[RMDB]
RNA sequence: GGGAACGACUCGAGUAGAGUCGAAAAGACUGCGGAGAAGGGCAUUCGUGCCACAGCCCUAUCGCAUUGGAGCGCAUCAGAAAUGAAGCAACGGACGGAACGCUGAAAAUCCAGGUCUCUUUGCAGACGGGAUUUAGUAGUUCGCUACUAAAUCCCGAAAAGAAACAACAACAACAAC
Reactivity to 2A3 in 0.01 (KOAc 150mM, MgCl2 10mM, bicine 150mM(pH8.5), 24C), signal-to-noise 1, nucleotides 027 to 126: g030a000c040u000g040c030g000g040a070g030a060a050g080g000g000c010a040u120u060c110g060u080g040c020c010a120c000a060g040c000c010c010u100a150u100c030g000c090a040u050u190g070g020a070g000c050g010c020a050u030c000a010g120a100a080a040u110g030a070a010g000c030a000a030c010g030g030a010c020g010g020a080a000c060g030c030u090g040a060a030a010a030u060c030c020a040g100g060u010c000u000c000u100u070u080g000c010a000g030a110
Reactivity to DMS in 0.01 (KOAc 150mM, MgCl2 10mM, bicine 150mM(pH8.5), 24C), signal-to-noise 2, nucleotides 027 to 126: g010a080c110u000g010c040g030g000a100g000a090a070g000g000g040c040a130u010u000c070g050u000g000c040c050a120c140a130g000c010c020c020u010a070u000c050g010c060a030u000u000g000g020a090g010c080g010c120a030u000c040a000g000a100a050a170u010g000a040a060g030c040a090a080c120g000g000a050c030g010g000a050a060c050g000c020u030g000a020a040a060a040u000c050c010a090g010g020u000c030u000c000u000u000u040g010c080a050g000a050
The record gives the reactivity of an RNA of 177 nucleotides to 2A3 and DMS.
For 2A3, 1,167 sequencing reads were counted.
Reactivities are given for positions 27 through 126.
The RNA was probed in 150 mM KOAc, 10 mM MgCl2 and 150 mM bicine (pH 8.5) at 24 C.
For 2A3 the reverse transcriptase was SuperScript II with manganese.
For DMS the reverse transcriptase was MarathonRT.